Conditions: 150 mM KOAc, 10 mM MgCl2 and 150 mM bicine (pH 8.5), 24 C. This 177-nucleotide RNA was probed chemically with 2A3. The data come from the RNA Mapping Database (RMDB), library OK1LIB.
[RMDB]
RNA sequence: GGGAACGACUCGAGUAGAGUCGAAAAUGACGAUUAGAUGUCCGCACAACUCCGGACUCGCGGUGAGCGAUACAGCGCAGCGCGAGCAUCGCAGCUGCUGUGCGGACGGCUAGCAAGGGCUAGCCACCGCGCAGCGCGCAUUCGUGCGCGCUGCGCGAAAAGAAACAACAACAACAAC
Reactivity to 2A3 in 0.01 (KOAc 150mM, MgCl2 10mM, bicine 150mM(pH8.5), 24C), signal-to-noise 1, nucleotides 027 to 126: u290g100a020c110g020a000u050u160a100g100a180u240g000u010c000c010g080c000a000c000a020a300c060u120c190c000g020g020a000c000u000c030g000c000g160g030u010g040a040g000c000g000a120u140a160c060a070g000c000g000c000a000g020c000g000c000g000a000g000c020a130u030c020g000c000a000g000c030u250g010c000u000g010u050g000c000g000g020a000c000g000g000c000u000a000g000c080a300a210g240g140g180c000u020a000g000c040c000a000c020